[RMDB]
The record gives the reactivity of an RNA of 177 nucleotides to 2A3 and DMS. DMS adducts were read by reverse transcription with MarathonRT. The 2A3 profile rests on 36,394 reads.
RNA sequence: GGGAACGACUCGAGUAGAGUCGAAAACGUACGGCCAGCUGUGGUACGGUACCAGGCCAUGCGGAUCGUAUGUGAUCAUGUACAGGUACUGGUACAGAGUACACUGUCGAGGCGCGAUCGAGCGCUCGACGGAACAGACAUUCGUGUCUGUUCCGUCAAAAGAAACAACAACAACAAC
Reactivity to 2A3 in 0.01 (KOAc 150mM, MgCl2 10mM, bicine 150mM(pH8.5), 24C), signal-to-noise 9, nucleotides 027 to 126: c020g060u160a020c030g040g020c020c020a040g000c060u070g030u130g140g060u040a030c010g010g000u010a010c000c010a010g010g000c010c000a030u060g000c010g020g000a020u010c020g050u200a190u300g270u240g020a010u010c050a130u150g020u030a030c120a190g020g000u190a300c000u000g000g000u000a010c000a000g080a000g010u010a000c040a010c020u050g060u150c040g070a130g050g000c040g000c010g040a090u130c080g030a040g050c030g000c040u060c070
Reactivity to DMS in 0.01 (KOAc 150mM, MgCl2 10mM, bicine 150mM(pH8.5), 24C), signal-to-noise 9, nucleotides 027 to 126: c070g010u010a090c060g010g010c020c030a140g010c060u010g020u010g010g020u000a030c030g000g010u000a010c020c010a030g010g010c010c000a300u000g010c020g000g000a020u000c010g010u010a110u010g020u020g010a030u000c020a040u010g040u000a040c160a070g010g000u000a070c000u000g010g000u000a020c040a060g000a170g010u000a030c030a080c030u000g000u010c040g010a120g010g010c000g010c020g000a190u000c130g010a130g010c030g010c030u000c090